[RMDB]
RNA sequence: GGGAACGACUCGAGUAGAGUCGAAAAUUCAUUCCAACCCUCGGGCAGGUCCGCGCCACCACCUGCGAGCUCUUUGAGCUCGUGGAAGCGAUGGUUGAGAAGGGUCAGGAUGGCUCUGCUGUCCUUGCGGAGUAGGGGUAUUCGUACCCCUACUCCGAAAAGAAACAACAACAACAAC
Reactivity to DMS in 0.01 (KOAc 150mM, MgCl2 10mM, bicine 150mM(pH8.5), 24C), signal-to-noise 1, nucleotides 027 to 126: u010u010c110a130u010u000c000c040a140a090c040c020c010u010c050g010g020g020c090a110g020g010u010c050c070g000c110g000c000c020a070c050c040a120c090c010u000g000c010g000a000g010c000u010c020u000u000u000g000a000g010c010u000c000g000u000g000g000a070a120g000c100g000a030u000g030g010u000u010g010a100g020a090a090g020g000g010u000c110a100g020g000a030u000g000g050c020u020c110u010g030c010u010g010u000c010c010u000u000g040
Reactivity to 2A3 in 0.01 (KOAc 150mM, MgCl2 10mM, bicine 150mM(pH8.5), 24C), signal-to-noise 1, nucleotides 027 to 126: u010u030c000a020u070u000c020c010a010a030c060c000c000u030c030g030g020g000c060a080g150g000u040c010c010g110c000g020c040c010a030c000c000a030c000c000u000g020c010g000a000g010c000u020c070u110u260u300g020a000g000c000u010c010g000u010g000g010a090a030g060c070g080a120u030g000g000u060u140g030a120g060a170a030g040g000g030u020c030a030g000g050a050u040g010g000c020u050c080u300g010c000u020g000u060c000c000u020u040g010